RNA sequence: GGGAACGACUCGAGUAGAGUCGAAAAGAACGCCAAGAGGCGAGACCGAGACCGAUAAUCACGCUAACUCGGAAAAGUGGAAUAGCGUCAGGAGUCCACUUUCGGAAAAGCCGAAAGAACGGCAGAAGAUGAGCCUACUAUUCGUAGUAGGCUCAUCAAAAGAAACAACAACAACAAC
Reactivity to 2A3 in 0.01 (KOAc 150mM, MgCl2 10mM, bicine 150mM(pH8.5), 24C), signal-to-noise 3, nucleotides 027 to 126: g050a070a000c040g000c040c000a180a110g140a130g070g010c000g000a000g010a000c000c020g030a090g060a010c000c020g000a040u140a140a040u150c040a000c000g000c030u030a030a060c030u010c030g070g050a020a150a050a000g080u110g060g090a100a170u090a080g020c020g050u020c020a020g090g040a010g040u000c010c010a000c000u000u000u020c010g040g000a000a030a090a220g110c000c000g040a030a020a020g040a080a020c060g010g040c010a000g050a060a030
Reactivity to DMS in 0.01 (KOAc 150mM, MgCl2 10mM, bicine 150mM(pH8.5), 24C), signal-to-noise 3, nucleotides 027 to 126: g000a050a160c050g030c000c010a130a140g030a200g020g000c000g000a060g000a300c040c000g000a100g000a170c030c000g000a060u010a060a160u000c110a130c170g030c020u000a040a100c170u020c010g010g010a060a030a050a100g000u000g020g010a010a060u030a070g000c040g000u000c070a060g000g010a140g010u000c030c020a060c000u000u000u000c010g000g000a130a070a150a060g010c020c010g000a120a020a040g020a060a080c060g000g010c040a080g000a110a090

Source: RMDB library OK1LIB, as collected in RNAgym. An RNA of 177 nucleotides, treated with 2A3 and DMS and read out base by base. DMS adducts were read by reverse transcription with MarathonRT. The reactions ran in a buffer of 150 mM KOAc, 10 mM MgCl2 and 150 mM bicine (pH 8.5), at 24 C. As a SHAPE reagent, 2A3 marks flexible, mostly unpaired nucleotides at the ribose 2'-OH. 2A3 adducts were read by reverse transcription with SuperScript II with manganese.